[RMDB]
An RNA of 177 nucleotides, treated with 2A3 and DMS and read out base by base. Conditions: 150 mM KOAc, 10 mM MgCl2 and 150 mM bicine (pH 8.5), 24 C. It was measured as part of the RMDB library OK2TRN.

RNA sequence: GGGAACGACUCGAGUAGAGUCGAAAACCAAUUGAGGUCUGAGUGGGUGUGUUUGGCCUAUAACCUAUUUAGCCAAGAAAAUAGCACAGACCCGUGUGGUUAUAGGUUCAUAAUUGGAUCAAUUUGGACCAGAGUGUUUUUUCGAAAACACUCUGGUAAAAGAAACAACAACAACAAC
Reactivity to 2A3 in 0.01 (KOAc 150mM, MgCl2 10mM, bicine 150mM(pH8.5), 24C), signal-to-noise 1, nucleotides 027 to 126: c000c000a000a020u050u070g090a110g000g000u000c010u060g000a030g110u060g000g110g000u030g000u030g030u080u070u160g040g020c030c000u000a020u020a030a010c000c010u060a150u100u080u150a040g090c060c000a010a000g050a020a090a010a020u120a010g000c040a000c060a070g100a170c040c020c050g010u100g020u100g050g010u000u000a010u020a060g000g000u000u070c010a050u070a180a080u070u120g030g010a000u020c030a020a130u040u050u110g070g030
Reactivity to DMS in 0.01 (KOAc 150mM, MgCl2 10mM, bicine 150mM(pH8.5), 24C), signal-to-noise 3, nucleotides 027 to 126: c020c000a080a130u010u010g010a110g020g000u010c000u000g010a110g020u010g020g030g040u000g000u010g030u010u000u010g000g000c020c020u010a020u000a030a020c030c010u000a100u000u000u000a140g010c080c060a070a100g000a100a070a070a090u000a150g020c030a070c040a110g010a060c040c010c080g010u010g010u000g020g010u000u000a010u000a020g000g020u010u000c050a030u010a060a090u010u010g000g020a120u000c070a040a130u010u010u010g000g000